RNA sequence: GGGAACGACUCGAGUAGAGUCGAAAAAGUUCAAACCCUAAUCCAAAUAGUAAGCCAUCUAUAGGUUUAGCGAUGAUAAGGAUAUUCGUAAUCGUAGGAAUAGUUUUAUCAUCUAUAGGGAUACCUACAUAUAAGGCCUUUUCGAAGGCCUUAUAUGAAAAGAAACAACAACAACAAC
Reactivity to 2A3 in 0.01 (KOAc 150mM, MgCl2 10mM, bicine 150mM(pH8.5), 24C), signal-to-noise 3, nucleotides 027 to 126: a030g130u150u100c050a100a030a080c010c000c000u010a040a040u010c020c020a090a030a100u080a040g110u020a060a090g070c010c000a030u060c130u160a160u100a170g010g030u020u080u050a080g010c040g020a000u010g010a000u000a010a000g030g010a010u000a010u010u030c040g090u150a060a150u080c140g100u110a150g000g060a020a010u010a020g010u030u040u000u020a000u030c010a000u000c000u050a100u040a050g010g020g000a020u070a050c010c010u040a040
Reactivity to DMS in 0.01 (KOAc 150mM, MgCl2 10mM, bicine 150mM(pH8.5), 24C), signal-to-noise 7, nucleotides 027 to 126: a090g010u010u010c180a090a080a120c010c010c000u000a050a080u010c060c080a080a080a090u000a090g010u000a060a080g010c100c070a080u010c100u000a070u010a160g010g000u000u000u000a060g020c170g010a010u000g010a010u000a010a000g000g000a040u000a010u000u000c010g020u020a070a120u020c290g010u010a100g010g000a020a010u000a000g000u000u000u000u000a010u000c000a000u000c000u000a110u000a030g020g000g010a110u000a060c040c030u000a110
This 177-nucleotide RNA was probed chemically with 2A3 and DMS. The 2A3 profile rests on 2,731 reads. For 2A3 the reverse transcriptase was SuperScript II with manganese. The reactions ran in a buffer of 150 mM KOAc, 10 mM MgCl2 and 150 mM bicine (pH 8.5), at 24 C.